[RMDB]
RNA sequence: GGGAACGACUCGAGUAGAGUCGAAAAUAAAUGAAGAAAUACCAUCCUUGCUCUGCGAUGGCCGUCGAACACAUACACUUGAGAAUUCUGAGUGAGGGUACUGUAGCAUCGGGUUACUGUACACCAAACUCCAAAACUUAUUCGUAAGUUUUGGAGUAAAAGAAACAACAACAACAAC
Reactivity to DMS in 0.01 (KOAc 150mM, MgCl2 10mM, bicine 150mM(pH8.5), 24C), signal-to-noise 7, nucleotides 027 to 126: u040a050a100a070u020g010a130a110g000a100a070a080u010a080c050c030a070u000c040c030u000u010g000c080u000c020u000g020c070g000a050u010g010g000c030c040g020u000c030g000a070a070c150a080c090a090u030a130c070a030c040u010u020g010a110g000a210a120u020u010c040u010g010a090g020u010g010a160g010g010g010u000a010c010u000g000u000a010g000c020a220u040c150g010g010g010u010u000a000c020u000g010u000a010c040a100c030c030a080a110
Reactivity to 2A3 in 0.01 (KOAc 150mM, MgCl2 10mM, bicine 150mM(pH8.5), 24C), signal-to-noise 9, nucleotides 027 to 126: u150a010a060a060u170g100a060a110g070a070a100a020u140a060c010c010a020u050c000c000u040u050g020c020u030c030u090g030c050g050a060u050g040g000c030c010g060u070c030g040a100a000c040a000c000a060u190a070c020a010c040u050u090g040a040g050a170a150u170u060c060u090g050a050g040u050g040a100g010g010g010u010a020c010u040g010u020a000g010c010a040u210c150g180g060g000u000u000a010c010u020g010u020a010c120a100c030c030a060a020
An RNA of 177 nucleotides, treated with DMS and 2A3 and read out base by base. Values cover nucleotides 27 to 126. The RNA was probed in 150 mM KOAc, 10 mM MgCl2 and 150 mM bicine (pH 8.5) at 24 C.